[RMDB]
RNA sequence: GGGAACGACUCGAGUAGAGUCGAAAAGAGAAGGGAUGAUGGGUGGACGAUGAUUAACUAAUCUUAUUUUUAACGUUUGAAAUUGAUAUUUCAAAUCAUACAAAAUAGGAUUAGUCUGCCCAUUUUCCUAGAUCAUGUUAUUCGUAACAUGAUCUAGAAAAGAAACAACAACAACAAC
Reactivity to DMS in 0.01 (KOAc 150mM, MgCl2 10mM, bicine 150mM(pH8.5), 24C), signal-to-noise 9, nucleotides 027 to 126: g010a130g010a120a100g000g000g010a030u000g010a010u000g010g010g030u000g000g010a050c130g010a140u030g010a170u030u030a100a160c200u010a010a000u000c000u000u000a010u000u000u000u000u010a090a210c300g000u000u000u000g000a010a010a010u010u020g010a150u030a060u000u000u000c000a010a000a010u000c070a110u010a110c270a010a000a010a000u000a010g000g000a010u000u000a020g000u000c010u000g010c000c000c000a010u000u000u000u000c010
Reactivity to 2A3 in 0.01 (KOAc 150mM, MgCl2 10mM, bicine 150mM(pH8.5), 24C), signal-to-noise 9, nucleotides 027 to 126: g130a010g030a060a120g060g010g010a020u040g000a000u010g020g010g020u030g030g010a020c040g070a110u300g040a110u190u230a100a040c040u020a020a000u000c000u000u000a010u000u010u000u000u040a040a020c030g000u000u000u000g010a010a010a010u110u180g130a080u140a040u300u010u000c000a000a000a010u080c020a010u030a130c060a030a000a000a000u000a000g000g000a000u000u000a010g000u000c010u010g000c000c000c000a000u000u000u000u000c000
This 177-nucleotide RNA was probed chemically with DMS and 2A3. Values are in units of 0.01, from 0 to 300, in steps of 10. For DMS the reverse transcriptase was MarathonRT. The RNA was probed in 150 mM KOAc, 10 mM MgCl2 and 150 mM bicine (pH 8.5) at 24 C.